[RMDB]
RNA sequence: GGGAACGACUCGAGUAGAGUCGAAAAGCCGCCUGCUACGGCAGGCGGCAACGUGCAAGCGCUGCACGAAAAAGUCGAUCGAAUACCGAUCGACAAGCGCUAAGCUAGCCGCUACGGCGGCUAGCAACGUAAAUGCUAUGUUCGCAUAGCAUUUACGAAAAGAAACAACAACAACAAC
Reactivity to 2A3 in 0.01 (KOAc 150mM, MgCl2 10mM, bicine 150mM(pH8.5), 24C), signal-to-noise 1, nucleotides 027 to 126: g010c020c010g000c000c040u060g000c000u100a080c300g220g000c000a000g000g000c060g000g000c000a000a000c000g000u010g010c010a090a030g000c000g000c010u010g050c000a000c000g130a080a020a010a000a000g000u000c000g010a000u000c000g010a080a080u140a300c150c010g000a010u010c000g000a000c010a010a000g000c000g000c000u010a030a000g000c000u000a000g000c020c000g030c040u030a070c300g100g000c000g000g000c000u010a000g000c020a000a000
Overview:
Chemical mapping of a 177-nucleotide RNA with 2A3. For 2A3, 2,292 sequencing reads were counted.